The record gives the reactivity of an RNA of 177 nucleotides to DMS and 2A3. Source: RMDB library RFM100, as collected in RNAgym. For DMS, 2,541 sequencing reads were counted. Values cover nucleotides 27 to 126. The 2A3 profile rests on 1,274 reads. High 2A3 reactivity points to a flexible backbone, as in loops and unpaired stretches.
RNA sequence: GGGAACGACUCGAGUAGAGUCGAAAAGUCAAGAAAACCCCAAAACCGUAAAAUGAGAGCAAUUCGCCUGGUUCCUCUUUAAAGUCAAACCAGGAGGCUCCGCCGGACUAGAGGUCGAAAAGGACUGUCAGGUGUCUUUUUUCGAAAAGACACCUGAAAAAGAAACAACAACAACAAC
Reactivity to DMS in 0.01 (KOAc 150mM, MgCl2 10mM, bicine 150mM(pH8.5), 24C), signal-to-noise 3, nucleotides 027 to 126: g000u000c010a060a080g010a200a060a080a070c040c000c020c000a060a060a210a130c030c030g000u040a060a130a070a080u010g010a150g000a000g020c000a140a210u030u060c160g000c000c000u000g000g010u010u000c040c140u010c030u060u040u050a070a080a040g020u030c220a090a010a000c000c030a000g000g010a090g000g010c020u000c000c020g000c200c000g000g000a050c020u030a230g010a070g000g010u000c010g000a050a070a100a060g000g010a030c030u010g020
Reactivity to 2A3 in 0.01 (KOAc 150mM, MgCl2 10mM, bicine 150mM(pH8.5), 24C), signal-to-noise 2, nucleotides 027 to 126: g020u010c010a020a030g060a070a190a050a100c010c000c000c000a010a080a050a110c020c010g100u160a000a040a090a130u150g030a120g000a010g140c010a040a140u220u140c080g020c050c010u000g020g010u080u080c070c010u060c070u110u260u220a170a200a000g040u070c070a000a050a000c000c000a010g000g000a000g010g000c020u000c000c000g000c000c000g000g000a020c000u000a070g060a060g070g000u030c010g080a030a060a020a020g090g010a000c010u010g000